[RMDB]
RNA sequence: GGGAACGACUCGAGUAGAGUCGAAAAGGAGGAGGUCUGCCCAAUUUCCCAUAUAUCCUUACCACGGCAGACUUCGAAGGGCUUGAGAAUGGGAAAUUGGUGGUAAGGAUAUGUCUCAAGCCUUAGACUACAGGUAUGUAUUCGUACAUACCUGUAGAAAAGAAACAACAACAACAAC
Reactivity to DMS in 0.01 (KOAc 150mM, MgCl2 10mM, bicine 150mM(pH8.5), 24C), signal-to-noise 7, nucleotides 027 to 126: g000g000a230g000g000a100g010g010u000c000u000g000c010c010c140a080a210u000u000u000c000c000c000a080u000a100u010a040u000c000c000u000u000a020c010c010a060c050g010g010c010a010g000a030c030u000u000c030g000a140a160g000g000g010c000u000u000g000a020g000a040a050u000g010g010g010a090a060a060u000u010g020g020u000g010g000u000a010a010g000g000a040u000a010u010g000u000c010u000c000a010a010g010c000c000u000u000a100g000a200
Reactivity to 2A3 in 0.01 (KOAc 150mM, MgCl2 10mM, bicine 150mM(pH8.5), 24C), signal-to-noise 2, nucleotides 027 to 126: g060g010a040g030g040a030g000g030u000c000u010g000c000c000c010a010a040u020u020u010c010c000c020a010u070a010u030a000u040c000c000u000u000a010c010c000a020c020g020g010c010a000g000a010c010u020u000c010g000a040a030g010g000g000c000u000u010g000a000g010a040a030u040g020g000g080a030a030a040u070u070g140g000u020g000g000u010a000a000g000g000a000u020a050u080g020u000c000u000c010a000a010g000c000c000u000u010a020g010a000
This 177-nucleotide RNA was probed chemically with DMS and 2A3. The RNA was probed in 150 mM KOAc, 10 mM MgCl2 and 150 mM bicine (pH 8.5) at 24 C. Source: RMDB library OK2TRN, as collected in RNAgym.